[RMDB]
RNA sequence: GGGAACGACUCGAGUAGAGUCGAAAAUCCCAAAGGUUGCCGAAUCCGAAAGGUGAGGAGGAACCGCUUUUUGGGGUUAAUCUGCAGUGAAGCUGCAGUAGGGAUACCUUCUGUCCCGCACCCGACAGCUAACUCCACAGGCAAUAAAGGAAGGAGAACUGCAUAGUGGUUUCGACCACUAUGCAGUAAAAGAAACAACAACAACAAC
Reactivity to DMS in 0.01 (KOAc 150mM, MgCl2 10mM, bicine 150mM(pH8.5), 24C), signal-to-noise 2, nucleotides 027 to 156: u000c010c010c000a110a110a110g040g020u000u000g000c020c030g050a200a250u000c010c020g020a070a130a130g000g010u010g040a140g000g010a280g030g000a160a130c080c040g020c100u000u000u000u000u000g010g020g060g000u000u000a020a130u000c010u050g010c020a030g000u000g000a160a140g030c000u000g020c020a020g000u000a080g040g040g020a050u010a070c020c050u000u020c060u000g000u000c050c010c000g010c150a090c000c000c000g020a130c080a060g010c030u010a140a170c010u000c020c000a130c030a300g000g010c010a070a110u000a040a070a110g000g000a050a090g010g030a300g000a090
Reactivity to 2A3 in 0.01 (KOAc 150mM, MgCl2 10mM, bicine 150mM(pH8.5), 24C), signal-to-noise 1, nucleotides 027 to 156: u030c000c000c060a020a150a020g090g010u000u000g040c000c010g050a070a100u010c000c000g160a130a110a070g030g000u010g000a020g000g040a010g030g010a010a040c070c050g020c050u120u160u030u030u070g090g000g000g000u020u000a050a010u050c000u000g030c000a020g030u060g250a220a020g140c000u000g040c000a000g000u010a020g000g000g000a000u050a130c000c000u000u020c000u030g000u010c020c000c000g020c000a080c010c000c000g010a060c060a010g000c010u010a050a030c010u020c000c000a040c000a080g000g000c040a000a000u060a080a090a000g020g000a000a000g000g010a040g010a140
Notes: This 207-nucleotide RNA was probed chemically with DMS and 2A3. For DMS the reverse transcriptase was MarathonRT.